[RMDB]
RNA sequence: GGGAACGACUCGAGUAGAGUCGAAAAGAUAUGGAGCGUGCGUACUGGGAGUGCUACAAUCGGAAACGAUUGAGCACGAAGAACAGUACUCUCAUCGCUCCUAAGUCAAACCCACGUUCGCGUGGGACAAACGUCGAUUGUUCGCAAUCGACGUUUGAAAAGAAACAACAACAACAAC
Reactivity to DMS in 0.01 (KOAc 150mM, MgCl2 10mM, bicine 150mM(pH8.5), 24C), signal-to-noise 2, nucleotides 027 to 126: g000a010u000a210u000g000g000a020g020c010g020u000g030c300g000u000a000c010u000g020g000g010a090g040u000g000c020u040a160c000a020a000u000c010g000g010a080a020a090c000g000a010u000u000g000a140g000c000a000c010g000a070a120g000a050a160c010a010g010u000a000c010u000c220u010c170a130u020c000g020c000u000c000c000u010a000a080g010u000c040a060a140a290c000c000c000a000c000g010u010u000c230g040c050g080u000g000g020g020a140
Reactivity to 2A3 in 0.01 (KOAc 150mM, MgCl2 10mM, bicine 150mM(pH8.5), 24C), signal-to-noise 2, nucleotides 027 to 126: g040a010u040a030u080g020g000a000g000c010g070u210g010c170g030u020a000c010u040g040g000g020a060g010u040g000c000u220a300c010a000a000u000c000g050g000a030a000a000c000g010a000u000u000g000a010g000c030a010c010g000a100a000g040a020a000c000a000g010u030a020c000u000c020u040c090a300u300c030g000c000u000c000c020u020a010a010g000u000c000a070a010a300c000c000c000a010c010g030u080u110c300g000c020g070u010g000g070g040a090